[RMDB]
Chemical mapping of a 177-nucleotide RNA with DMS. Conditions: 150 mM KOAc, 10 mM MgCl2 and 150 mM bicine (pH 8.5), 24 C. Reactivities are given for positions 27 through 126. It was measured as part of the RMDB library TTRDEL.
RNA sequence: GGGAACGACUCGAGUAGAGUCGAAAAGAUAUGGAGACGUGUGUGGAGUAGCUCGGAAACGAGGCUACGUUGAAACACGUCUCCUAAGUCAAACACAAAGCUGGUUCUUCGGAACCAGCUUUGUGAACGGUACUGUAUGCUUCGGCAUACAGUACCGAAAAGAAACAACAACAACAAC
Reactivity to DMS in 0.01 (KOAc 150mM, MgCl2 10mM, bicine 150mM(pH8.5), 24C), signal-to-noise 1, nucleotides 027 to 126: g000a020u000a110u020g000g000a000g010a000c000g000u000g020u010g030u010g050g010a220g000u000a010g000c020u000c000g000g010a020a010a080c000g010a030g010g010c010u000a000c000g000u000u010g010a160a100a010c010a000c000g010u000c010u010c000c000u000a000a050g010u000c000a130a070a260c020a000c010a000a030a010g000c000u010g000g000u000u000c000u000u030c200g030g000a000a000c000c000a000g000c000u000u000u000g020u000g000a020a110